This 177-nucleotide RNA was probed chemically with DMS and 2A3. The reactions ran in a buffer of 150 mM KOAc, 10 mM MgCl2 and 150 mM bicine (pH 8.5), at 24 C.

RNA sequence: GGGAACGACUCGAGUAGAGUCGAAAAGGGCGUCAUUUCGAUGACGCCCAUACGUCUACUCCGAUUGGCGAGGACGACGCCGACGGGCGCGUUUGCCAUUCGCACCGUCCAGAUUCGUCUGGACGAAUAAAACGUUAGCGUUCGCGCUAACGUUUUAAAAAGAAACAACAACAACAAC
Reactivity to DMS in 0.01 (KOAc 150mM, MgCl2 10mM, bicine 150mM(pH8.5), 24C), signal-to-noise 2, nucleotides 027 to 126: g000g020g020c000g000u000c000a010u000u000u000c190g020a010u010g010a020c000g010c010c000c020a000u000a020c250g000u000c000u000a040c020u000c020c000g010a020u000u010g000g010c000g010a110g000g000a050c000g000a120c010g030c000c000g020a110c300g000g000g020c010g010c010g010u010u000u000g040c000c000a040u000u000c000g000c120a140c220c020g000u000c000c000a000g010a060u000u010c200g010u000c000u000g010g000a010c050g020a060a070
Reactivity to 2A3 in 0.01 (KOAc 150mM, MgCl2 10mM, bicine 150mM(pH8.5), 24C), signal-to-noise 2, nucleotides 027 to 126: g010g030g020c010g020u010c010a010u000u090u210c220g080a020u010g000a010c020g020c000c000c010a000u000a000c010g020u000c020u020a010c000u000c020c020g020a030u000u020g020g000c060g030a090g080g070a050c030g090a170c000g000c010c020g170a300c180g080g000g000c010g000c000g000u010u010u100g040c000c000a000u000u030c010g010c030a080c050c030g020u070c000c000a020g020a050u030u070c130g030u000c110u000g000g000a010c030g000a000a000
For 2A3 the reverse transcriptase was SuperScript II with manganese. DMS adducts were read by reverse transcription with MarathonRT.